[RMDB]
RNA sequence: GGGAACGACUCGAGUAGAGUCGAAAAGAUAUGGAAGACGACGAUCUCUACGGUCGAAGAACUCGGAAACGAGGGAGACCUGUAGAGGGAGUCUUCCUAAGUCAAAAGUGUGCGUUCGCGCACACAAGUUCGAAGGAAAGUUCGCUUUCCUUCGAACAAAAGAAACAACAACAACAAC
Reactivity to 2A3 in 0.01 (KOAc 150mM, MgCl2 10mM, bicine 150mM(pH8.5), 24C), signal-to-noise 2, nucleotides 027 to 126: g010a010u090a070u150g000g010a000a010g000a000c020g030a040c010g020a030u020c010u000c000u020a000c010g010g000u020c050g110a070a060g030a020a010c000u010c000g020g000a020a070a020c010g000a010g000g030g000a020g020a000c000c220u210g000u020a010g000a000g020g000g000a000g000u010c010u000u000c000c000u010a080a010g050u030c020a050a050a090a120g000u000g010u010g000c020g000u030u090c280g000c010g000c130a000c000a000c000a010a010
Reactivity to DMS in 0.01 (KOAc 150mM, MgCl2 10mM, bicine 150mM(pH8.5), 24C), signal-to-noise 2, nucleotides 027 to 126: g000a070u000a300u000g000g000a010a030g020a000c010g040a110c230g000a040u010c010u010c000u000a000c020g010g000u000c000g020a050a130g010a080a210c010u000c020g010g000a110a110a190c010g000a010g040g000g000a090g000a020c010c000u010g060u000a010g000a020g020g000g010a050g010u000c000u010u000c000c000u000a040a070g000u000c030a090a100a060a130g050u000g000u000g000c000g030u000u010c240g030c010g000c010a010c000a000c000a050a120

Source information: The record gives the reactivity of an RNA of 177 nucleotides to 2A3 and DMS. For DMS the reverse transcriptase was MarathonRT. For 2A3 the reverse transcriptase was SuperScript II with manganese. The reactions ran in a buffer of 150 mM KOAc, 10 mM MgCl2 and 150 mM bicine (pH 8.5), at 24 C. The data come from the RNA Mapping Database (RMDB), library TTRDEL.